Notes:
An RNA of 207 nucleotides, treated with DMS and 2A3 and read out base by base. The reactions ran in a buffer of 150 mM KOAc, 10 mM MgCl2 and 150 mM bicine (pH 8.5), at 24 C. For 2A3, 825 sequencing reads were counted. Values cover nucleotides 27 to 156. DMS adducts were read by reverse transcription with MarathonRT.
RNA sequence: GGGAACGACUCGAGUAGAGUCGAAAAAAUCAAUCAGGUUAGUUAUAUUGAAGAGCCUUGAGCUAUGGCAGACAAUAUAAUGAACUACAAAUAAUAGCCCUAUAAACGUAGAUAUUGGUGUAUCGGGCGAUUUGGACAGGGGUUCGACUCCCCUCAGCUCUAUAAUAACCUUCGGGUUAUUAUAGAGAAAAGAAACAACAACAACAAC
Reactivity to DMS in 0.01 (KOAc 150mM, MgCl2 10mM, bicine 150mM(pH8.5), 24C), signal-to-noise 2, nucleotides 027 to 156: a080a100u020c030a080a130u000c070a140g030g010u000u000a140g010u000u000a010u010a000u000u000g000a070a240g000a300g000c000c010u000u000g020a260g040c120u000a040u010g010g030c000a140g020a300c020a050a030u010a020u000a030a020u000g010a010a050c020u010a110c060a050a080a110u010a050a100u000a090g010c000c000c000u000a090u000a010a050a060c010g020u000a150g020a280u000a110u010u000g030g050u010g010u000a010u010c130g030g020g020c000g000a030u000u000u000g000g010a070c070a000g030g020g020g000u000u000c070g010a300c090u000c010c000c010c020u000c010a070g020
Reactivity to 2A3 in 0.01 (KOAc 150mM, MgCl2 10mM, bicine 150mM(pH8.5), 24C), signal-to-noise 2, nucleotides 027 to 156: a000a020u250c100a040a010u090c060a050g020g110u060u170a020g010u010u000a070u000a010u050u020g010a100a030g060a050g190c010c010u040u060g070a110g080c100u160a080u110g020g000c000a000g040a120c000a010a000u010a000u010a050a030u010g010a010a010c000u080a030c050a000a090a020u170a070a020u030a100g020c000c000c040u020a040u030a030a080a010c040g030u030a050g120a190u130a130u230u300g130g000u060g000u010a050u030c060g000g000g040c030g020a000u010u050u110g020g010a010c030a030g000g000g010g030u020u040c000g010a000c030u040c010c000c000c000u010c000a010g020